[RMDB]
Structure probing data (2A3 and DMS) for a 177-nucleotide construct.
As a SHAPE reagent, 2A3 marks flexible, mostly unpaired nucleotides at the ribose 2'-OH.
High DMS reactivity at an A or C suggests that its Watson-Crick edge is free.
It was measured as part of the RMDB library M2PK50.

RNA sequence: GGGAACGACUCGAGUAGAGUCGAAAAGUCUCCCGAUUCGUCGGGAGACCGAGAAAUUCAGGUGAUUUGCUACCUUUAAGUGCAGCUAGAAAUUCAAAGGAUACACCAUGGCGUUCGCGCCAUGGAACAGAAUCUUCUAAUUCGUUAGAAGAUUCUGAAAAGAAACAACAACAACAAC
Reactivity to 2A3 in 0.01 (KOAc 150mM, MgCl2 10mM, bicine 150mM(pH8.5), 24C), signal-to-noise 9, nucleotides 027 to 126: g000u000c000u000c000c000c010g010a010u040u060c150g020u000c000g050g000g000a020g000a000c000c010g010a030g090a040a160a040u220u160c060a010g010g010u020g080a300u080u070u090g010c000u010a020c010c000u140u230u290a020a010g010u020g000c010a000g010c030u110a050g130a140a190a110u230u150c100a180a110a030g110g020a080u050a140c070a030c050c000a010u000g000g000c000g020u020u040c190g010c000g000c060c000a000u000g000g000a000a000
Reactivity to DMS in 0.01 (KOAc 150mM, MgCl2 10mM, bicine 150mM(pH8.5), 24C), signal-to-noise 8, nucleotides 027 to 126: g010u000c000u000c000c000c000g000a020u000u010c170g020u000c000g010g010g000a010g010a000c000c020g000a110g010a300a080a100u000u000c070a020g000g010u000g000a140u000u010u000g000c010u000a010c010c010u000u010u010a010a020g010u000g000c010a020g020c270u010a080g010a070a050a100u010u010c080a060a090a080g000g010a120u010a100c190a160c000c000a010u000g000g000c000g020u000u010c200g020c010g010c000c000a000u000g000g000a050a100